Overview: This 177-nucleotide RNA was probed chemically with DMS and 2A3. For DMS, 742 sequencing reads were counted. The data come from the RNA Mapping Database (RMDB), library OK2TST.

RNA sequence: GGGAACGACUCGAGUAGAGUCGAAAACAAUGCGGAAGAGAUGUGUAUAACUGGUACUUGGCAGAACAUCCUUCAAUAUGCAGUGGCACUUACUUCCUCCUAUAGGCAAGGUCUCGAAUAAAUAUCGUAGUAUCCGUCUGUUCGCAGACGGAUACUAAAAAGAAACAACAACAACAAC
Reactivity to DMS in 0.01 (KOAc 150mM, MgCl2 10mM, bicine 150mM(pH8.5), 24C), signal-to-noise 2, nucleotides 027 to 126: c100a100a150u010g020c110g010g010a070a070g000a140g020a050u000g010u000g010u000a130u010a210a150c050u000g010g010u010a050c120u000u000g030g000c160a120g010a190a040c090a050u000c020c010u000u000c060a030a110u020a050u020g010c000a080g010u000g030g070c040a050c040u030u000a100c140u000u000c010c030u030c010c080u000a070u000a100g030g000c070a090a070g000g000u000c050u000c050g070a030a100u030a070a040a070u000a090u010c150g000
Reactivity to 2A3 in 0.01 (KOAc 150mM, MgCl2 10mM, bicine 150mM(pH8.5), 24C), signal-to-noise 1, nucleotides 027 to 126: c010a020a060u040g000c020g050g010a000a010g110a030g010a040u010g040u030g080u000a030u080a300a130c020u040g040g000u020a080c050u140u210g100g000c140a010g000a020a000c000a050u060c040c030u070u000c000a060a000u130a080u220g010c010a000g000u000g000g000c090a030c030u140u080a010c000u020u020c010c030u040c030c000u220a190u120a010g070g000c130a170a020g000g010u050c070u000c030g050a010a000u140a090a230a010u290a080u170c100g030